[RMDB]
RNA sequence: GGGAACGACUCGAGUAGAGUCGAAAAGAUAUGGACGGAGAAUUCCGAUAAGCAGCCAUCGGAAACGAUGGACUGCUUUUGACGGAAUUAUCCGUCCUAAGUCAAAACACGAGCUUCGGCUCGUGAACACGGAAUAAGUGUUCGCACUUAUUCCGUGAAAAGAAACAACAACAACAAC
Reactivity to 2A3 in 0.01 (KOAc 150mM, MgCl2 10mM, bicine 150mM(pH8.5), 24C), signal-to-noise 2, nucleotides 027 to 126: g020a010u060a030u170g000g000a000c000g000g000a010g020a040a030u000u030c040c110g080a060u090a180a000g000c000a000g020c000c000a010u000c020g050g000a090a050a030c020g000a000u000g030g020a050c000u000g000c030u010u000u020u030g030a000c010g010g010a000a010u010u010a010u000c000c000g000u000c000c000u000a000a010g000u020c010a000a000a050a050c030a000c000g010a000g000c000u100u270c300g200g000c000u000c010g000u000g000a000a010
Reactivity to DMS in 0.01 (KOAc 150mM, MgCl2 10mM, bicine 150mM(pH8.5), 24C), signal-to-noise 4, nucleotides 027 to 126: g000a060u010a300u000g010g030a030c000g010g000a030g000a030a020u010u000c010c000g040a180u010a010a010g020c000a010g000c000c010a000u010c000g010g000a150a090a140c010g010a020u000g000g000a090c000u000g010c000u000u000u000u000g020a270c120g020g000a030a010u000u000a060u000c000c000g020u000c000c000u000a020a070g000u010c010a110a090a130a240c030a010c010g000a000g020c010u000u000c260g050g000c010u010c000g010u000g000a050a210